[RMDB]
RNA sequence: GGGAACGACUCGAGUAGAGUCGAAAAGUGAGUCCUUACGAGGACUCACAAUAAAUUCAGCGGAAAUUCGACCGCAAAUAUUUCCGCUGAUGCGGUCGAAAAAGCUGCUACGUACGCGUAGCAGCAAUCGGGAGUAUUAGUUCGCUAAUACUCCCGAAAAAGAAACAACAACAACAAC
Reactivity to 2A3 in 0.01 (KOAc 150mM, MgCl2 10mM, bicine 150mM(pH8.5), 24C), signal-to-noise 4, nucleotides 027 to 126: g010u000g000a000g000u000c010c010u040u020a130c290g120a030g010g000a000c000u000c000a020c000a000a000u020a010a010a010u110u120c070a030g120c030g120g130a060a050a060u040u040c020g010a010c000c000g020c030a000a030a000u120a020u030u050u000c010c020g060c140u010g010a020u050g010c010g000g000u010c010g000a060a000a000a000a000g000c000u000g010c000u010a000c000g060u010a000c230g000c000g090u000a010g000c010a000g000c010a000a010
Reactivity to DMS in 0.01 (KOAc 150mM, MgCl2 10mM, bicine 150mM(pH8.5), 24C), signal-to-noise 2, nucleotides 027 to 126: g000u000g000a000g000u000c000c000u000u000a150c160g010a040g010g000a010c000u000c010a000c000a050a030u020a050a000a080u020u010c060a060g000c070g000g010a130a080a080u010u000c030g000a000c000c070g000c040a080a070a110u030a130u000u000u000c020c010g010c130u010g010a080u000g000c030g000g020u020c030g040a010a080a080a090a100g000c000u000g000c010u000a010c000g000u030a090c300g010c000g050u000a000g010c000a000g000c000a000a000

Chemical mapping of a 177-nucleotide RNA with 2A3 and DMS. 2A3 adducts were read by reverse transcription with SuperScript II with manganese. Reactivities are rounded to 0.1 and cut off at 0 and 3. The DMS profile rests on 2,878 reads. For DMS the reverse transcriptase was MarathonRT. Conditions: 150 mM KOAc, 10 mM MgCl2 and 150 mM bicine (pH 8.5), 24 C.